[RMDB]
RNA sequence: GGGAACGACUCGAGUAGAGUCGAAAAGAGCGUGCCUAGCUGCGUUUCAACCUGCGUGGGUUGGGGCGGCUUUGCCGAUUAAGGCGUUGUUCCACCCUAGUGGUACUUACUUCAUGCAAAGCCUGCGUGCAGGCGGGGUAUGUGGCGCGGGGCAAAAGUGAGAUAGAUCGUUCGCGAUCUAUCUCACAAAAGAAACAACAACAACAAC
Reactivity to 2A3 in 0.01 (KOAc 150mM, MgCl2 10mM, bicine 150mM(pH8.5), 24C), signal-to-noise 1, nucleotides 027 to 156: g140a010g050c100g020u180g030c000c020u060a060g000c020u050g010c030g060u020u000u100c010a040a020c050c010u080g150c160g120u300g020g010g040u080u000g020g010g010g000c000g100g000c020u040u020u080g000c000c030g060a080u290u220a170a000g030g020c060g010u050u000g000u010u000c010c030a050c000c010c010u030a180g010u050g110g300u000a050c020u020u020a000c000u010u060c020a090u160g080c090a000a000a110g020c030c000u020g030c080g110u200g080c040a030g000g020c080g010g000g000g000u060a060u010g020u000g100g020c030g000c010g020g040g000g000c000a030a070a000a000

Conditions: 150 mM KOAc, 10 mM MgCl2 and 150 mM bicine (pH 8.5), 24 C.
This 207-nucleotide RNA was probed chemically with 2A3.
The 2A3 profile rests on 669 reads.
For 2A3 the reverse transcriptase was SuperScript II with manganese.
It was measured as part of the RMDB library VIROID.